RNA sequence: GGGAACGACUCGAGUAGAGUCGAAAAGAUAUGGAUCGUAAAGAGCGCCACAACAAUGUCGGAAACGAUGAUUGUGGAACUACGCUCUUGUACGAUCCUAAGUCAAAUCCAACCUUCGGGUUGGAAACUUGAGUAAAAUCUUCGGAUUUUACUCAAGAAAAGAAACAACAACAACAAC
Reactivity to DMS in 0.01 (KOAc 150mM, MgCl2 10mM, bicine 150mM(pH8.5), 24C), signal-to-noise 5, nucleotides 027 to 126: g000a040u000a300u000g000g000a010u000c010g020u000a030a030a000g000a010g030c000g010c000c020a010c010a010a010c090a090a060u010g010u000c000g000g000a140a080a200c000g010a010u000g000a090u000u000g010u000g000g010a080a020c130u010a300c010g010c000u000c000u000u010g010u000a000c000g000a000u000c000c000u010a010a090g000u010c040a060a100a130u000c000c010a000a010c000c000u000u020c210g020g010g020u000u010g000g000a010a030a080
Reactivity to 2A3 in 0.01 (KOAc 150mM, MgCl2 10mM, bicine 150mM(pH8.5), 24C), signal-to-noise 2, nucleotides 027 to 126: g050a000u060a050u180g010g000a010u000c000g010u000a000a010a000g000a000g000c010g000c010c010a000c000a000a020c020a050a100u210g010u010c010g040g030a080a080a070c020g010a020u080g080a120u050u030g000u020g000g010a010a040c070u150a040c080g000c000u000c000u000u010g010u010a000c000g000a000u000c000c000u000a030a000g010u000c030a030a010a140u000c000c000a000a010c000c000u080u060c300g130g000g000u000u030g000g000a070a010a020
Record summary:
Chemical mapping of a 177-nucleotide RNA with DMS and 2A3. The 2A3 profile rests on 8,503 reads. The DMS profile rests on 8,221 reads. 2A3 adducts were read by reverse transcription with SuperScript II with manganese. Conditions: 150 mM KOAc, 10 mM MgCl2 and 150 mM bicine (pH 8.5), 24 C.